[RMDB]
RNA sequence: GGGAACGACUCGAGUAGAGUCGAAAAGUCAUCGCUGGGUAGGCUAGAUAUAUCGAUCACUACCCACCCAUCCUGAAGCGCGCACGGGAUGGAGGUGAUCGCCGAGUAUCUGCCUACCUGUGCUGAAGCGCGCACGGCAACCGAAAGGUGCGAGAAAGGUAGAUUCAAUCUUCGGAUUGAAUCUACCAAAAGAAACAACAACAACAAC
Reactivity to 2A3 in 0.01 (KOAc 150mM, MgCl2 10mM, bicine 150mM(pH8.5), 24C), signal-to-noise 1, nucleotides 027 to 156: g050u040c030a030u000c100g000c000u010g010g020g000u000a010g030g000c130u230a010g020a000u020a000u030a050u110c010g000a010u020c010a000c010u060a030c030c050c000a010c000c010c000a000u000c000c000u040g060a280a050g020c020g000c000g000c000a020c000g000g020g000a000u010g010g000a020g000g010u010g000a000u010c010g150c190c120g150a130g050u000a010u010c020u030g000c000c000u000a000c000c000u000g000u000g000c000u000g010a130a040g000c000g000c000g000c010a020c000g000g000c010a000a010c000c000g000a050a010a010g000g000u000g000c000g010a030g050a060a060a010
Structure probing data (2A3) for a 207-nucleotide construct. The data come from the RNA Mapping Database (RMDB), library RNAMAK. Values are in units of 0.01, from 0 to 300, in steps of 10. The 2A3 profile rests on 2,172 reads.